The record gives the reactivity of an RNA of 177 nucleotides to 2A3 and DMS. It was measured as part of the RMDB libraries RFM100 and RFMREP.
RNA sequence: GGGAACGACUCGAGUAGAGUCGAAAAUGACUGGCCAUUUGCAGACUGAGGAAUUGGCCUCUGUAGGGACCUGAUUUUUGAGUUACUUUCCGCCCGCUUGCCUCCCUUCCCCCUCCAAGUGGCACUGGAUCAUACCAGAUUUCGAUCUGGUAUGAUCAAAAGAAACAACAACAACAAC
Reactivity to 2A3 in 0.01 (KOAc 150mM, MgCl2 10mM, bicine 150mM(pH8.5), 24C), signal-to-noise 9, nucleotides 027 to 126: u150g030a020c070u040g030g010c000c000a030u020u020u120g050c030a040g040a150c060u130g030a060g050g100a100a120u130u070g070g030c030c000u020c010u040g070u050a070g020g010g040a060c010c010u050g090a140u030u030u030u070u120g110a090g040u060u080a080c020u050u070u020c000c010g010c010c000c010g020c010u020u070g020c000c020u030c000c010c000u000u030c000c000c000c000c000u000c010c010a040a020g030u040g040g000c030a020c070u050g060
Reactivity to DMS in 0.01 (KOAc 150mM, MgCl2 10mM, bicine 150mM(pH8.5), 24C), signal-to-noise 5, nucleotides 027 to 126: u030g000a140c090u010g010g000c020c010a080u010u000u010g020c070a090g020a100c060u000g010a090g010g020a090a100u000u010g010g010c050c020u010c030u000g000u000a070g000g000g000a060c050c020u030g000a060u000u000u000u010u010g000a100g010u000u000a060c080u000u010u010c040c020g000c030c010c040g010c060u000u020g010c030c030u010c030c010c020u000u010c020c000c010c010c010u000c030c020a040a090g030u000g000g000c040a070c110u000g020